The data come from the RNA Mapping Database (RMDB), library TTRDEL.
The record gives the reactivity of an RNA of 177 nucleotides to 2A3 and DMS.
Reactivities are rounded to 0.1 and cut off at 0 and 3.
The DMS profile rests on 1,156 reads.
RNA sequence: GGGAACGACUCGAGUAGAGUCGAAAAGGGAGGUUCGCCUCCCAAAAAAGAUAUGGACAGAGUAGUGCCCAUUCGGAAACGAAUGAAGGCAGCUCGUCCUAAGUCAAAAAACUGCCUUCGGGCAGAACUAUUACCUUGACUUCGGUCAAGGUAAUAGAAAAGAAACAACAACAACAAC
Reactivity to 2A3 in 0.01 (KOAc 150mM, MgCl2 10mM, bicine 150mM(pH8.5), 24C), signal-to-noise 1, nucleotides 027 to 126: g000g000g000a000g000g000u140u110c210g100c040c040u090c000c000c070a000a000a020a000a000a010g010a010u020a020u090g000g000a030c130a150g000a250g090u250a080g240u090g030c000c000c000a000u000u000c000g020g000a050a040a030c000g000a010a000u020g050a100a100g010g010c020a020g000c010u000c000g010u000c000c000u020a160a030g090u000c040a000a000a000a050a230a300c010u010g000c000c000u010u030c220g020g040g020c000a000g000a000a000
Reactivity to DMS in 0.01 (KOAc 150mM, MgCl2 10mM, bicine 150mM(pH8.5), 24C), signal-to-noise 1, nucleotides 027 to 126: g000g000g030a000g010g040u010u000c280g010c010c000u000c030c000c000a000a010a090a030a060a010g010a030u030a300u000g000g010a020c020a150g010a020g000u010a040g010u030g000c000c010c050a010u010u000c010g000g000a150a060a090c020g000a020a000u000g000a090a100g020g000c000a030g000c000u000c020g010u010c000c000u000a020a040g000u010c000a010a060a100a030a100a100c000u000g000c000c000u000u010c250g080g020g000c000a000g000a030a150
Reactivities are given for positions 27 through 126.